[RMDB]
RNA sequence: GGGAACGACUCGAGUAGAGUCGAAAAGGGGUCGUCCGUUGAUCAUCUCAAGCCGACGAUCUGUACUGAAGCCUCCACGGUACAGGGAGGCUUGGAUGGGAGGACGACGGAGGCACCCAAACUUGUUAGCGUUACGUUCGCGUAACGCUAACAAGAACCAUAAUUCCUCCUUCGGGAGGAAUUAUGGAAAAGAAACAACAACAACAAC
Reactivity to 2A3 in 0.01 (KOAc 150mM, MgCl2 10mM, bicine 150mM(pH8.5), 24C), signal-to-noise 2, nucleotides 027 to 156: g050g010g030g010u030c000g000u000c010c000g060u120u020g000a000u000c000a000u000c210u050c280a020a000g000c000c010g160a300c000g000a050u010c000u000g000u000a000c000u000g030a080a010g020c010c000u020c000c000a000c000g000g000u000a000c000a000g000g010g000a010g000g000c000u000u010g000g000a000u000g000g000g000a020g000g000a000c010g000a000c000g000g000a010g000g020c000a060c000c000c000a030a110a070c000u000u000g000u000u000a000g010c010g000u000u000a000c000g030u010u050c300g000c000g120u000a000a000c000g000c000u000a000a000c000a000a000g000a000a000
The record gives the reactivity of an RNA of 207 nucleotides to 2A3.
For 2A3 the reverse transcriptase was SuperScript II with manganese.
The data come from the RNA Mapping Database (RMDB), library RNAMAK.
The reactions ran in a buffer of 150 mM KOAc, 10 mM MgCl2 and 150 mM bicine (pH 8.5), at 24 C.